The record gives the reactivity of an RNA of 177 nucleotides to DMS and 2A3.
Values cover nucleotides 27 to 126.
Source: RMDB library 15KREP, as collected in RNAgym.
2A3 adducts were read by reverse transcription with SuperScript II with manganese.
For DMS, 6,445 sequencing reads were counted.
The RNA was probed in 150 mM KOAc, 10 mM MgCl2 and 150 mM bicine (pH 8.5) at 24 C.
Values are in units of 0.01, from 0 to 300, in steps of 10.
RNA sequence: GGGAACGACUCGAGUAGAGUCGAAAAUGUUGAAUUUUAUGAAGACCGCAUCUUGGACUUUAAAGUUCUUGAUAAUGGUAUCAUUAGGGAUGUAAAUCCUGAUGAUAAGUGCUUUGCUAAUAAGCACGAAGUUAAUAUACUUCGGUAUAUUAACUUCAAAAGAAACAACAACAACAAC
Reactivity to DMS in 0.01 (KOAc 150mM, MgCl2 10mM, bicine 150mM(pH8.5), 24C), signal-to-noise 5, nucleotides 027 to 126: u010g010u010u010g010a110a090u000u010u000u020a080u010g010a160a150g000a190c010c020g020c230a030u000c010u000u000g000g000a020c000u000u020u010a090a110a100g010u000u000c000u000u010g010a020u000a090a110u010g010g010u000a020u000c000a010u000u000a060g040g000g010a030u000g000u010a090a110a060u000c000c000u000g010a020u000g010a020u000a050a130g020u000g000c000u000u000u000g010c220u010a070a090u000a010a010g000c000a010c010
Reactivity to 2A3 in 0.01 (KOAc 150mM, MgCl2 10mM, bicine 150mM(pH8.5), 24C), signal-to-noise 2, nucleotides 027 to 126: u090g020u050u070g040a080a090u050u020u100u140a120u130g040a070a040g040a040c000c010g000c040a010u000c000u020u010g000g000a010c010u090u070u220a150a300a030g000u010u010c000u000u000g010a020u040a100a050u160g020g010u030a010u010c010a000u000u040a090g000g030g020a030u080g070u210a060a040a090u020c000c000u000g000a010u010g000a000u010a110a040g000u000g000c000u010u040u030g030c050u090a150a070u060a260a000g010c010a010c020